This 207-nucleotide RNA was probed chemically with 2A3 and DMS.

RNA sequence: GGGAACGACUCGAGUAGAGUCGAAAAAUACAAGUUCGCUUGUAUCGGUCCUAAGUCGUUGGGAGCUUGGAGGUAGGCAUCGAUCUUAUCGGAAACGAUAAGGGAGCCUGCGAAGAGCGAAGAACAACGAUAUGGAAUGGCUUAGUUUCGACUAAGCGUGUGAAUGACAAUUCGUUGUCAUUCACACAAAAGAAACAACAACAACAAC
Reactivity to 2A3 in 0.01 (KOAc 150mM, MgCl2 10mM, bicine 150mM(pH8.5), 24C), signal-to-noise 3, nucleotides 027 to 156: a000u030a000c010a010a010g010u050u070c210g090c150u020u010g010u010a040u090c110g050g090u000c000c010u050a150a020g040u000c020g000u010u010g020g010g020a040g000c000u010u020g050g030a100g250g160u010a000g010g000c050a150u280c070g060a010u050c020u000u000a000u000c000g060g010a100a060a030c020g010a010u000a000a000g020g000g000a000g000c010c000u000g000c010g010a040a000g000a000g010c040g020a090a030g010a000a010c010a000a000c000g010a010u010a060u110g000g070a080a060u130g080g000c010u010u000a010g000u050u110u190c260g070a070c000u010a000a000g010c030
Reactivity to DMS in 0.01 (KOAc 150mM, MgCl2 10mM, bicine 150mM(pH8.5), 24C), signal-to-noise 2, nucleotides 027 to 156: a040u000a000c010a010a000g020u000u030c270g040c000u000u000g000u000a000u000c000g010g000u010c000c000u050a140a300g050u000c010g020u000u000g000g000g030a300g080c000u000u000g010g030a300g020g060u000a030g020g070c010a220u020c170g000a080u040c000u000u030a000u000c010g040g030a180a130a220c000g030a050u030a020a080g030g020g010a000g030c010c000u000g010c000g010a300a300g000a060g020c010g020a090a100g040a080a170c060a010a060c100g020a040u000a170u000g020g020a140a100u000g010g020c010u000u010a080g010u010u000u010c220g000a120c010u000a010a070g040c100
It was measured as part of the RMDB library RNAMAK. The 2A3 profile rests on 2,732 reads.